[RMDB]
About this RNA
The record gives the reactivity of an RNA of 177 nucleotides to 2A3 and DMS. The RNA was probed in 150 mM KOAc, 10 mM MgCl2 and 150 mM bicine (pH 8.5) at 24 C.

RNA sequence: GGGAACGACUCGAGUAGAGUCGAAAAGAAAGAAAGAAGUGAUGAUAGCAAGGGUUGAAAGCCAUCUGUGGCUUUGCCCGUGUCUGCAUGAAGGAAAUACCUCUGUAGACCUGCUGAAACGUCACAACCUUUUACCUCGAUUCGUCGAGGUAAAAGGAAAAGAAACAACAACAACAAC
Reactivity to 2A3 in 0.01 (KOAc 150mM, MgCl2 10mM, bicine 150mM(pH8.5), 24C), signal-to-noise 9, nucleotides 027 to 126: g080a020a040a010g160a020a070a010g150a130a040g010u010g000a020u030g110a230u100a020g000c030a050a100g070g040g030u100u250g200a040a010a000g010c010c000a070u090c150u250g300u120g020g000c000u000u000u010g000c000c020c000g000u020g000u000c000u000g010c010a040u220g100a100a060g040g030a100a110a080u280a130c000c000u000c000u000g000u000a010g000a010c000c010u020g000c000u030g020a090a080a040c010g010u000c000a000c000a000a070
Reactivity to DMS in 0.01 (KOAc 150mM, MgCl2 10mM, bicine 150mM(pH8.5), 24C), signal-to-noise 6, nucleotides 027 to 126: g010a090a090a100g000a090a080a070g030a150a120g010u000g000a010u000g000a190u020a020g000c010a150a130g020g000g040u010u020g000a000a020a010g000c010c000a050u020c270u030g010u020g010g010c000u000u000u000g000c000c010c020g010u020g000u020c000u010g010c000a000u020g010a110a040g000g000a080a130a110u050a130c010c000u000c010u000g000u010a020g000a010c000c300u010g000c000u000g000a070a080a060c010g020u000c000a000c010a090a120

Annotation:
For 2A3 the reverse transcriptase was SuperScript II with manganese.